This 177-nucleotide RNA was probed chemically with DMS. For DMS, 1,460 sequencing reads were counted.
RNA sequence: GGGAACGACUCGAGUAGAGUCGAAAAGAUAUGGACGCAGCCUUAGGCUCUUGGAUUUACAAGGUCCCUAGUUCGGAAACGAACUAGAACCCUUGUUGUCAGAGCACUAAGGCUGCGUCCUAAGUCACCAAAUUCAUCUGUUCGCAGAUGAAUUUGGAAAAGAAACAACAACAACAAC
Reactivity to DMS in 0.01 (KOAc 150mM, MgCl2 10mM, bicine 150mM(pH8.5), 24C), signal-to-noise 2, nucleotides 027 to 126: g030a060u010a300u020g000g010a000c000g030c000a020g040c000c000u030u000a010g000g010c000u000c000u010u060g050g020a030u000u000u000a030c000a010a030g010g010u010c200c300c020u000a000g000u000u010c000g030g010a190a050a290c000g010a000a030c000u000a010g000a060a140c300c000c000u000u000g020u000u000g020u000c000a030g000a030g000c010a100c000u000a000a020g000g000c020u000g000c010g000u000c000c010u000a010a070g000u030c020a290
Values cover nucleotides 27 to 126.